This 207-nucleotide RNA was probed chemically with DMS and 2A3. The reactions ran in a buffer of 150 mM KOAc, 10 mM MgCl2 and 150 mM bicine (pH 8.5), at 24 C. For 2A3, 2,232 sequencing reads were counted. Reactivities are given for positions 27 through 156. The DMS profile rests on 1,441 reads.

[RMDB]
RNA sequence: GGGAACGACUCGAGUAGAGUCGAAAAGCAAGUCACGUUGCGACUUAUACGCAUCAUAACCAGCCUUAACAAGAGCACCCAUUGAAACGGCUAAUGCGGCAAGGCCAACGUUUACCGGAUUCAGAAACGACAACAGCACUUUAAACGUAUUGCCAACGCAGUGUUCUAACUUCGGUUAGAACACUGCAAAAGAAACAACAACAACAAC
Reactivity to DMS in 0.01 (KOAc 150mM, MgCl2 10mM, bicine 150mM(pH8.5), 24C), signal-to-noise 1, nucleotides 027 to 156: g050c050a050a070g000u020c140a080c020g010u000u010g000c040g000a110c050u000u000a070u020a120c000g000c020a050u010c030a090u000a100a040c040c030a190g040c000c010u020u010a110a120c130a040a080g030a080g000c000a050c050c000c020a220u000u020g000a070a090a080c120g000g030c050u010a040a090u020g000c060g020g000c050a180a060g020g020c020c020a070a030c080g020u000u000u000a070c060c000g000g020a140u010u020c040a170g020a150a150a140c020g020a040c020a020a030c000a050g000c020a060c080u020u020u000a020a050a030c060g010u000a100u000u000g000c020c050a160a070c220
Reactivity to 2A3 in 0.01 (KOAc 150mM, MgCl2 10mM, bicine 150mM(pH8.5), 24C), signal-to-noise 4, nucleotides 027 to 156: g040c050a030a020g070u100c060a020c090g040u030u040g040c050g020a030c000u070u070a050u070a150c040g010c010a020u040c050a080u100a120a040c050c000a030g000c000c000u080u080a060a050c070a050a050g030a010g130c060a050c010c010c030a030u020u160g090a070a050a020c020g020g000c050u060a100a000u060g030c070g030g020c030a030a090g020g000c010c050a040a050c040g010u010u030u080a110c030c030g030g040a040u100u120c070a030g140a080a090a020c050g110a030c030a060a040c000a090g070c050a040c090u060u050u150a060a060a020c040g040u030a130u010u130g000c000c000a030a000c050